Description: The data come from the RNA Mapping Database (RMDB), library 15KLIB. The record gives the reactivity of an RNA of 170 nucleotides to 2A3 and DMS. 2A3 adducts were read by reverse transcription with SuperScript II with manganese. The reactions ran in a buffer of 150 mM KOAc, 10 mM MgCl2 and 150 mM bicine (pH 8.5), at 24 C. DMS adducts were read by reverse transcription with MarathonRT. Reactivities are given for positions 27 through 129. The DMS profile rests on 37,587 reads.

RNA sequence: GGGAACGACUCGAGUAGAGUCGAAAACGAGACGCGAACCUGUGAGUGGAAACCCGCUUUAUUCACUGGGGACGACAACUCUGGGGAGAGAAGGGAGGGUCGGAUGGGAAGAGUAAAUCCUACGGGAAUACAAGGGAGUUCGCUCCCUUGAAAAGAAACAACAACAACAAC
Reactivity to 2A3 in 0.01 (KOAc 150mM, MgCl2 10mM, bicine 150mM(pH8.5), 24C), signal-to-noise 9, nucleotides 027 to 129: c050g020a020g040a030c040g010c030g030a040a050c000c020u030g040u040g080a010g010u040g010g040a060a050a030c010c000c000g040c030u080u140u090a150u110u130c080a030c120u060g000g010g010g030a040c040g010a020c020a100a030c030u010c030u060g000g000g010g000a080g010a010g020a050a030g040g040g100a150g010g020g030u070c060g030g030a060u080g040g000g010a030a070g050a030g020u100a010a050a060u010c000c000u020a050c060g010g000g020a030a010u070a070
Reactivity to DMS in 0.01 (KOAc 150mM, MgCl2 10mM, bicine 150mM(pH8.5), 24C), signal-to-noise 9, nucleotides 027 to 129: c100g040a090g000a010c080g000c010g000a100a100c040c040u040g020u030g010a030g040u040g030g020a060a070a090c020c000c030g000c180u030u020u050a080u040u020c080a030c110u050g010g000g010g000a150c110g000a160c110a110a100c030u010c050u020g030g030g030g020a130g000a040g040a040a010g030g020g020a130g020g020g000u050c090g030g030a040u030g010g000g000a000a030g000a090g020u040a050a090a110u000c000c000u040a110c100g010g000g020a080a080u030a090